Source information
Structure probing data (2A3 and DMS) for a 207-nucleotide construct. The reactions ran in a buffer of 150 mM KOAc, 10 mM MgCl2 and 150 mM bicine (pH 8.5), at 24 C. Values are in units of 0.01, from 0 to 300, in steps of 10. Values cover nucleotides 27 to 156.
[RMDB]
RNA sequence: GGGAACGACUCGAGUAGAGUCGAAAAAAGCUGCAAAUGAGGGAGUUGGAGAUCAGUCGAGGAAACUUGUCUUUAACCAGAGAAGGGUUUUAUUUUUAUAACACAUAACAAGUGUUUCGGUGUUAGCCUCACCCCUAAACAGAUAGAACUGCCCUUGAUCUAGAACAGGGUUCGCCCUGUUCUAGAUAAAAGAAACAACAACAACAAC
Reactivity to 2A3 in 0.01 (KOAc 150mM, MgCl2 10mM, bicine 150mM(pH8.5), 24C), signal-to-noise 1, nucleotides 027 to 156: a000a000g040c040u060g000c010a040a040a110u090g020a020g020g040g000a080g020u030u060g090g010a050g000a100u100c050a070g060u080c030g000a030g030g160a130a000a040c020u000u030g050u000c010u000u040u010a040a030c020c020a010g010a030g050a170a090g080g000g010u000u030u060u100a020u030u050u010u010u010a130u030a160a000c020a000c020a010u090a220a020c060a190a170g050u000g030u090u030u040c050g030g000u050g010u080u080a080g040c000c000u000c000a020c010c040c000c000u040a040a190a000c010a050g050a060u090a010g110a080a000c020u150g000c000c000c000u000u020g020
Reactivity to DMS in 0.01 (KOAc 150mM, MgCl2 10mM, bicine 150mM(pH8.5), 24C), signal-to-noise 1, nucleotides 027 to 156: a110a020g020c020u000g010c060a100a060a160u000g010a090g010g040g010a080g010u000u000g000g020a070g010a020u000c220a080g080u000c010g000a230g040g020a090a050a060c050u000u010g010u000c020u000u000u000a090a090c030c100a110g000a130g020a060a060g000g020g010u000u000u010u000a050u020u020u000u010u000a090u010a080a050c010a050c020a080u010a060a130c150a080a160g010u000g010u000u000u010c110g000g010u010g050u000u010a100g010c060c000u010c040a070c060c010c010c050u000a030a050a090c040a050g000a080u010a080g000a050a080c010u000g050c020c020c000u000u000g010